An RNA of 177 nucleotides, treated with 2A3 and DMS and read out base by base. For 2A3, 6,084 sequencing reads were counted. Source: RMDB library TTRDES, as collected in RNAgym. For 2A3 the reverse transcriptase was SuperScript II with manganese.

[RMDB]
RNA sequence: GGGAACGACUCGAGUAGAGUCGAAAAGAUAUGGAUAUACGAGGCAACAGCAUUAUGUCGGAAACGACAUCAAUGACAUGCCUUGUAUAUCCUAAGUCAAAGCGAUUGGAGUUCGCUCCAAUCGCAAGUGGAUACAGAUGUUCGCAUCUGUAUCCACAAAAGAAACAACAACAACAAC
Reactivity to 2A3 in 0.01 (KOAc 150mM, MgCl2 10mM, bicine 150mM(pH8.5), 24C), signal-to-noise 2, nucleotides 027 to 126: g000a000u020a020u040g000g000a020u000a000u000a000c000g010a000g070g000c210a300a040c100a300g010c000a030u010u000a010u010g000u020c000g020g000a000a000a000c010g010a000c010a020u040c180a020a000u000g020a030c060a180u300g000c000c000u000u000g000u000a000u000a000u000c000c000u000a010a000g000u000c010a010a050a080g000c000g000a000u020u010g000g000a030g010u070u170c200g140c150u010c000c010a000a000u000c000g000c000a000a020
Reactivity to DMS in 0.01 (KOAc 150mM, MgCl2 10mM, bicine 150mM(pH8.5), 24C), signal-to-noise 2, nucleotides 027 to 126: g000a020u000a030u000g000g000a000u000a000u010a000c000g010a000g020g030c000a220a120c260a140g020c000a000u000u000a000u000g000u000c010g020g000a000a000a010c000g010a030c000a000u010c300a000a010u000g010a000c090a240u010g000c000c000u000u000g010u000a020u000a000u000c000c000u000a000a050g000u000c000a140a130a150g020c010g000a000u000u000g000g000a030g050u000u000c270g020c000u020c000c000a020a020u000c020g020c020a000a010
Description:
Conditions: 150 mM KOAc, 10 mM MgCl2 and 150 mM bicine (pH 8.5), 24 C. Reactivities are given for positions 27 through 126.